[RMDB]
RNA sequence: GGGAACGACUCGAGUAGAGUCGAAAAAGCACGGUUUUUGAGGACGAAUUUUGUCCGUGCGGUAAUGCCCUCCUUUACACUUUCUCGCAUGGUGCGGGAGUGUGGAGAGGAAACAAAAGCUAGUCUCGAUAGGCGGUUAACUUCGGUUAACCGCCAAGCCAUUAGUCUUGUUCGCAAGACUAAUGGCAAAAGAAACAACAACAACAAC
Reactivity to 2A3 in 0.01 (KOAc 150mM, MgCl2 10mM, bicine 150mM(pH8.5), 24C), signal-to-noise 2, nucleotides 027 to 156: a000g000c000a000c000g000g030u000u000u000u000u010g030a020g000g010a010c000g020a000a060u000u000u000u010g000u030c000c000g000u010g000c020g010g060u230a070a050u300g030c010c000c000u010c000c010u010u100u050a010c020a000c010u100u120u040c030u030c010g070c010a090u180g280g070u300g210c010g000g010g010a000g000u010g000u000g000g000a030g000a020g030g040a050a010a000c010a000a070a000a000g300c010u040a000g000u000c000u000c040g040a100u120a150g000g000c000g000g000u000u000a010a000c020u030u060c150g050g000u000u000a000a000c000c000g000c000c000a000a000
This 207-nucleotide RNA was probed chemically with 2A3. It was measured as part of the RMDB library M2RFOK. For 2A3 the reverse transcriptase was SuperScript II with manganese. The RNA was probed in 150 mM KOAc, 10 mM MgCl2 and 150 mM bicine (pH 8.5) at 24 C.